[RMDB]
The record gives the reactivity of an RNA of 177 nucleotides to DMS and 2A3.
The data come from the RNA Mapping Database (RMDB), libraries RFM100 and RFMREP.
Conditions: 150 mM KOAc, 10 mM MgCl2 and 150 mM bicine (pH 8.5), 24 C.

RNA sequence: GGGAACGACUCGAGUAGAGUCGAAAAAGUGCGGGGAGGAGUUUGAGAUGGGAGGCGCUUGCAGGGGCUCCCCCAGUUCUGCGCUGUGAGCCGGGGCACAAAGAGCCCUCUGCACUAGCGCCGCAGGCCUUUCGCAAUAAUUCGUUAUUGCGAAAGGAAAAGAAACAACAACAACAAC
Reactivity to DMS in 0.01 (KOAc 150mM, MgCl2 10mM, bicine 150mM(pH8.5), 24C), signal-to-noise 6, nucleotides 027 to 126: a070g000u010g010c100g010g010g000g000a050g000g000a080g000u020u010u010g010a130g000a100u010g000g000g010a170g000g000c010g010c000u010u000g000c010a010g000g010g000g010c010u000c000c000c000c000c010a080g010u000u000c010u000g010c160g020c040u010g000u020g010a070g020c000c040g010g000g010g010c300a080c130a030a030a060g000a010g020c010c000c000u020c000u000g000c000a010c300u030a010g000c000g010c000c010g020c120a070g010g000
Reactivity to 2A3 in 0.01 (KOAc 150mM, MgCl2 10mM, bicine 150mM(pH8.5), 24C), signal-to-noise 5, nucleotides 027 to 126: a010g100u090g010c040g010g020g010g010a040g030g010a050g040u050u120u120g140a120g020a070u090g010g030g030a070g000g000c000g000c000u000u020g000c000a000g000g000g000g000c000u010c000c010c000c000c000a010g000u010u000c020u070g080c130g060c190u160g110u080g140a010g010c000c000g010g000g000g000c140a040c070a210a100a010g010a000g000c000c000c000u030c000u000g000c000a010c060u040a010g000c000g000c000c000g000c000a010g030g040